This 177-nucleotide RNA was probed chemically with DMS and 2A3.

[RMDB]
RNA sequence: GGGAACGACUCGAGUAGAGUCGAAAAGAUAUGGAUCACCAAGGCUUUUGACGGCCGGUCGGAAACGACCGACCGAUAAGCCUGGUGAUCCUAAGUCAAAAGCAAGUAGUCUUCGGACUACUUGCAAGAUUUAUAGUAGCUUCGGCUACUAUAAAUCAAAAGAAACAACAACAACAAC
Reactivity to DMS in 0.01 (KOAc 150mM, MgCl2 10mM, bicine 150mM(pH8.5), 24C), signal-to-noise 3, nucleotides 027 to 126: g000a020u000a050u000g000g000a010u000c000a000c000c000a030a050g050g010c010u000u010u010u010g020a300c020g000g000c010c010g010g010u000c000g030g010a020a020a040c010g020a010c010c010g000a000c000c010g010a020u010a010a020g020c000c000u010g000g010u000g000a000u000c000c000u000a000a040g000u000c020a090a100a120a170g010c000a010a010g010u000a000g000u000c000u000u020c250g020g000a010c000u000a000c000u000u000g000c000a020a020
Reactivity to 2A3 in 0.01 (KOAc 150mM, MgCl2 10mM, bicine 150mM(pH8.5), 24C), signal-to-noise 2, nucleotides 027 to 126: g000a000u020a010u040g000g000a010u010c000a000c030c020a140a230g030g020c070u210u170u300u300g100a030c000g030g000c000c000g010g000u010c000g000g010a010a030a000c010g000a010c000c010g000a010c010c000g040a060u090a280a000g010c020c010u000g000g000u010g000a000u010c000c000u000a000a000g000u010c000a040a030a030a210g000c000a000a000g000u010a000g010u000c030u050u180c300g050g000a000c000u000a010c000u000u010g000c000a010a000

The reactions ran in a buffer of 150 mM KOAc, 10 mM MgCl2 and 150 mM bicine (pH 8.5), at 24 C. DMS adducts were read by reverse transcription with MarathonRT. The data come from the RNA Mapping Database (RMDB), library TTRDEL.